This 207-nucleotide RNA was probed chemically with 2A3 and DMS.
[RMDB]
RNA sequence: GGGAACGACUCGAGUAGAGUCGAAAAGACAAAUAUGGGAUUUCCAGGCAUUAAAUUAAAACCAUCACGCACUUCACAAAUAGCAACUUUUGGGUGAAGGUGCCAGCUACAUUUUCUGAUUGAGAUGGGGAAAUGAUUCUCAAUGCACACAGGAGCACCCAUAAUCCUAUUUCGAUAGGAUUAUGGGAAAAGAAACAACAACAACAAC
Reactivity to 2A3 in 0.01 (KOAc 150mM, MgCl2 10mM, bicine 150mM(pH8.5), 24C), signal-to-noise 3, nucleotides 027 to 156: g040a010c040a010a070a030u160a070u110g020g030g040a060u040u060u020c010c010a020g030g000c020a010u050u090a090a050a060u090u100a030a070a110a040c020c010a030u070c020a000c080g020c020a020c010u040u010c040a000c020a050a150a090u120a100g100c050a050a160c090u130u160u190u130g150g050g000u020g020a020a010g060g000u020g000c000c000a030g040c020u070a050c060a060u080u100u090u070c020u050g090a100u080u070g030a060g020a080u050g010g020g010g040a030a050a130u100g050a080u120u010c040u030c050a040a050u060g010c040a030c000a000c010a090g020g030a010g040c020a020
Reactivity to DMS in 0.01 (KOAc 150mM, MgCl2 10mM, bicine 150mM(pH8.5), 24C), signal-to-noise 2, nucleotides 027 to 156: g020a160c040a080a080a140u010a090u000g010g000g000a110u000u010u010c030c040a060g000g040c040a060u000u000a030a050a150u000u000a020a070a130a120c000c050a060u000c070a120c080g030c020a040c020u000u000c030a070c030a050a070a070u000a100g000c030a120a080c220u010u000u000u000g000g050g010u000g000a050a010g020g000u010g010c000c050a020g000c010u000a030c030a030u010u000u010u010c010u000g020a160u000u000g000a080g000a050u000g010g000g050g000a040a070a080u000g010a220u000u000c030u000c010a050a130u000g020c040a070c030a050c050a070g000g000a150g020c100a190
For 2A3, 2,906 sequencing reads were counted.